Background:
This 177-nucleotide RNA was probed chemically with DMS and 2A3. The RNA was probed in 150 mM KOAc, 10 mM MgCl2 and 150 mM bicine (pH 8.5) at 24 C. For 2A3 the reverse transcriptase was SuperScript II with manganese.
RNA sequence: GGGAACGACUCGAGUAGAGUCGAAAAGAUAUGGAACGAUUCAUGACAUGCUAGAGGGUCGGAAACGACCUGAUAGCAACAGCAUGAUCGUUCCUAAGUCAAACGGUCAAACUUCGGUUUGACCGAAGUGUCGACAAUGGUUCGCCAUUGUCGACACAAAAGAAACAACAACAACAAC
Reactivity to DMS in 0.01 (KOAc 150mM, MgCl2 10mM, bicine 150mM(pH8.5), 24C), signal-to-noise 1, nucleotides 027 to 126: g010a050u000a300u000g010g000a000a020c000g010a000u000u010c000a020u000g000a110c090a250u000g000c000u040a000g000a300g000g010g030u000c010g040g020a030a060a210c000g000a010c000c030u010g000a130u000a000g030c000a030a000c300a080g020c040a000u000g020a030u000c010g010u000u000c000c000u000a020a130g020u020c000a150a050a300c030g070g000u000c010a000a000a030c000u000u010c190g020g030u000u010u010g000a000c010c060g000a000a000
Reactivity to 2A3 in 0.01 (KOAc 150mM, MgCl2 10mM, bicine 150mM(pH8.5), 24C), signal-to-noise 1, nucleotides 027 to 126: g000a050u070a010u140g000g000a020a010c000g010a000u210u300c030a000u020g060a130c050a180u300g000c000u000a010g000a020g060g000g000u000c000g000g000a030a060a010c000g010a010c030c010u000g000a020u000a000g040c000a000a030c080a020g020c000a020u000g000a010u030c010g000u010u010c000c000u020a010a020g010u000c030a020a120a180c020g020g030u000c000a000a050a000c030u060u180c300g240g000u050u030u030g000a010c050c040g000a030a020